[RMDB]
RNA sequence: GGGAACGACUCGAGUAGAGUCGAAAAAAUCAGGUGUCGAGUGCAAGUGCACAAGGGAGCUUGACUGUGAGACUGACAGGUCGAGCAGGGACGAAAGUCGGGACUAGUGAUCCGGCACCGGCAAGUGGACUCUAUAGGGGUUCGCCCCUAUAGAGUCAAAAGAAACAACAACAACAAC
Reactivity to DMS in 0.01 (KOAc 150mM, MgCl2 10mM, bicine 150mM(pH8.5), 24C), signal-to-noise 4, nucleotides 027 to 126: a090a070u060c070a120g010g000u000g010u010c020g000a140g000u020g000c030a110a040g000u010g010c020a030c020a070a050g010g000g030a180g000c000u010u000g010a080c000u000g010u000g000a300g030a010c030u010g010a180c300a120g020g000u010c010g050a300g000c000a020g000g000g000a030c030g010a090a070a130g010u010c020g010g000g010a040c060u010a020g010u010g000a070u020c090c030g000g010c000a010c000c010g020g050c230a020a140g020u010g010
Reactivity to 2A3 in 0.01 (KOAc 150mM, MgCl2 10mM, bicine 150mM(pH8.5), 24C), signal-to-noise 5, nucleotides 027 to 126: a000a020u180c060a030g020g000u020g010u020c020g040a080g040u070g020c030a160a140g110u090g160c030a030c030a040a070g060g060g010a090g070c010u030u050g030a050c010u010g020u010g010a020g020a040c010u060g040a090c100a140g110g000u020c000g000a000g000c000a020g000g000g020a010c040g050a150a010a000g030u060c010g010g030g020a020c030u060a030g040u040g050a060u030c030c010g000g000c000a000c010c000g020g020c020a130a000g080u100g150
The data come from the RNA Mapping Database (RMDB), libraries RFM100 and RFMREP. Structure probing data (DMS and 2A3) for a 177-nucleotide construct. For DMS the reverse transcriptase was MarathonRT. 2A3 adducts were read by reverse transcription with SuperScript II with manganese.